[RMDB]
Conditions: 150 mM KOAc, 10 mM MgCl2 and 150 mM bicine (pH 8.5), 24 C. An RNA of 177 nucleotides, treated with 2A3 and DMS and read out base by base. The 2A3 profile rests on 13,408 reads.

RNA sequence: GGGAACGACUCGAGUAGAGUCGAAAAGGUCGACGUCCAGCUCCCUCGGGACCACGCUGCUCUGGGCGGAAGAGUCUUCUGACUUUUCUAGCCUAUUCAGCUUCGCGUCCUUGAGGCCUGGCGUAACGGUAUGUUUUAUGUUCGCAUAAAACAUACCAAAAGAAACAACAACAACAAC
Reactivity to 2A3 in 0.01 (KOAc 150mM, MgCl2 10mM, bicine 150mM(pH8.5), 24C), signal-to-noise 4, nucleotides 027 to 126: g090g050u130c050g050a030c010g060u110c010c000a020g000c050u270c040c000c000u000c010g000g000g000a000c000c000a010c060g010c000u000g010c000u010c000u010g010g000g000c010g010g010a010a000g010a000g010u000c010u270u090c170u300g020a010c000u030u010u000u000c010u050a130g000c000c000u010a010u050u060c000a000g000c000u020u050c090g000c050g000u010c010c000u040u300g010a000g000g000c010c000u000g000g000c000g000u010a050a000c050
Reactivity to DMS in 0.01 (KOAc 150mM, MgCl2 10mM, bicine 150mM(pH8.5), 24C), signal-to-noise 5, nucleotides 027 to 126: g010g020u010c080g010a040c010g000u020c000c010a020g000c030u010c140c010c000u000c010g000g000g000a020c010c030a090c300g000c000u000g000c010u000c010u000g000g000g010c010g000g000a010a000g000a010g010u000c000u000u010c300u010g020a020c000u000u000u000u000c000u000a140g020c000c010u000a010u020u010c010a020g010c000u000u000c200g010c180g000u000c000c000u000u010g010a010g010g000c220c000u000g000g010c010g010u000a040a070c140